This 177-nucleotide RNA was probed chemically with 2A3. Conditions: 150 mM KOAc, 10 mM MgCl2 and 150 mM bicine (pH 8.5), 24 C.

[RMDB]
RNA sequence: GGGAACGACUCGAGUAGAGUCGAAAAGCGCUUGGCACAACAAUGGUAUGCGUGGUUUGCGGCCCUAAUUUAUUCAGCACGCGACUGCCGCAUCCCGCACGGGAGGCGCAGCUGCUGCAUGACGCUUCGGUGUCAUCCCAUUCGUGGGAUGACACCGAAAAGAAACAACAACAACAAC
Reactivity to 2A3 in 0.01 (KOAc 150mM, MgCl2 10mM, bicine 150mM(pH8.5), 24C), signal-to-noise 2, nucleotides 027 to 126: g050c020g020c060u010u060g110g000c000a010c040a040a230c080a050a190u170g000g030u120a030u130g030c050g060u030g020g150u110u050u110g000c000g010g090c000c000c050u000a070a120u040u090u210a100u120u040c000a000g000c000a020c080g060c010g060a000c030u050g040c060c020g000c040a000u000c070c000c000g060c080a020c010g000g000g000a020g060g000c000g020c000a000g010c040u030g000c000u040g030c070a090u040g090a040c000g020c130u020u050